[RMDB]
RNA sequence: GGGAACGACUCGAGUAGAGUCGAAAAAUUUAAUGGCCAGGACGGUCACCUUUGGGGUGGUGACAAGUGUGAUCACUUGGGUGGUGGCUGUGUUUGCGAAUCUCCCAGGAAUCUCGUUUACCAGAUCGGUAUCACUACGCUUCGGCGUAGUGAUACCAAAAGAAACAACAACAACAAC
Reactivity to 2A3 in 0.01 (KOAc 150mM, MgCl2 10mM, bicine 150mM(pH8.5), 24C), signal-to-noise 1, nucleotides 027 to 126: a000u230u230u300a060a000u150g120g000c030c000a010g000g000a020c020g000g000u050c050a040c040c000u100u210u100g090g000g020g000u050g000g000u000g010a050c000a010a000g240u070g000u000g200a100u140c000a000c000u000u000g050g000g000u060g010g040u000g000g000c000u000g000u050g060u000u000u020g040c000g000a000a070u000c000u000c000c000c000a000g000g130a010a010u000c000u000c010g000u020u090u130a160c000c000a000g000a210u130c070

Overview: This 177-nucleotide RNA was probed chemically with 2A3. For 2A3, 711 sequencing reads were counted. 2A3 is a SHAPE reagent: it acylates the 2'-hydroxyl of flexible nucleotides of all four kinds. The reactions ran in a buffer of 150 mM KOAc, 10 mM MgCl2 and 150 mM bicine (pH 8.5), at 24 C. For 2A3 the reverse transcriptase was SuperScript II with manganese.